[RMDB]
RNA sequence: GGGAACGACUCGAGUAGAGUCGAAAAUAAUCGUACGCGCCCUCGGGUACGGAGAGCGAAUCAUCGACAUGCCCGGUGAUGCGGAACUUGUAGACGUAGUAGAUUGUGCGAAGUUUGCGUUCGCACUCGUAGGAGAGGUAGCUGUGCACGUCUCUCGACUACCGGACUUUUUCGAAAGUCCGGUAGUAAAAGAAACAACAACAACAAC
Reactivity to 2A3 in 0.01 (KOAc 150mM, MgCl2 10mM, bicine 150mM(pH8.5), 24C), signal-to-noise 1, nucleotides 027 to 156: u080a000a060u090c060g040u080a000c010g000c000g040c020c050c030u050c060g020g010g090u060a050c000g000g000a020g000a000g090c140g060a080a120u190c100a100u010c000g010a050c020a040u110g030c000c010c010g000g020u050g000a030u060g000c020g000g030a040a000c030u110u040g150u300a070g050a100c000g040u090a060g060u010a050g060a140u050u210g010u000g000c010g000a020a010g030u130u300u240g140c110g050u000u000c000g000c000a010c050u040c040g120u170a020g040g050a030g020a020g030g070u060a010g000c050u110g090u170g040c020a020c000g020u000c050u000c000u010c020g000

An RNA of 207 nucleotides, treated with 2A3 and read out base by base. The data come from the RNA Mapping Database (RMDB), library OK3TST. Conditions: 150 mM KOAc, 10 mM MgCl2 and 150 mM bicine (pH 8.5), 24 C. 2A3 adducts were read by reverse transcription with SuperScript II with manganese.